Description:
Chemical mapping of a 177-nucleotide RNA with DMS and 2A3. Values cover nucleotides 27 to 126.
RNA sequence: GGGAACGACUCGAGUAGAGUCGAAAAGAAGAGAAUACAAGGCUGACAAAACCCUGUCCCCACCUCCACGUGGUGUCGGCUGGAUAAUGCUGCAUUAUGUUGCAUUUAUCACCUGGGAAGGAGAAGACACUACCUCGGUAUUCGUACCGAGGUAGUGAAAAGAAACAACAACAACAAC
Reactivity to DMS in 0.01 (KOAc 150mM, MgCl2 10mM, bicine 150mM(pH8.5), 24C), signal-to-noise 5, nucleotides 027 to 126: g000a140a140g010a120g000a120a110u030a110c170a080a060g000g000c010u010g000a040c060a070a070a110a110c120c010c010u000g000u030c010c010c040c030a060c070c030u000c040c050a080c110g010u000g000g020u000g010u010c030g020g030c040u000g000g000a010u000a010a020u010g010c000u000g000c010a190u050u040a050u040g020u000u010g000c010a010u020u010u030a020u010c020a110c060c020u000g000g010g020a070a070g000g000a100g010a110a080g010a190
Reactivity to 2A3 in 0.01 (KOAc 150mM, MgCl2 10mM, bicine 150mM(pH8.5), 24C), signal-to-noise 7, nucleotides 027 to 126: g110a040a000g120a010g070a090a040u100a120c080a060a020g020g000c010u020g020a040c020a020a130a040a070c010c000c010u010g080u050c000c020c000c000a020c010c030u050c030c020a080c060g070u070g000g020u020g020u010c000g020g010c010u030g000g010a010u010a030a000u020g000c010u020g010c020a090u100u130a110u300g030u020u030g000c010a010u050u050u080a050u020c030a020c030c010u030g020g040g030a070a050g030g030a050g040a090a020g050a010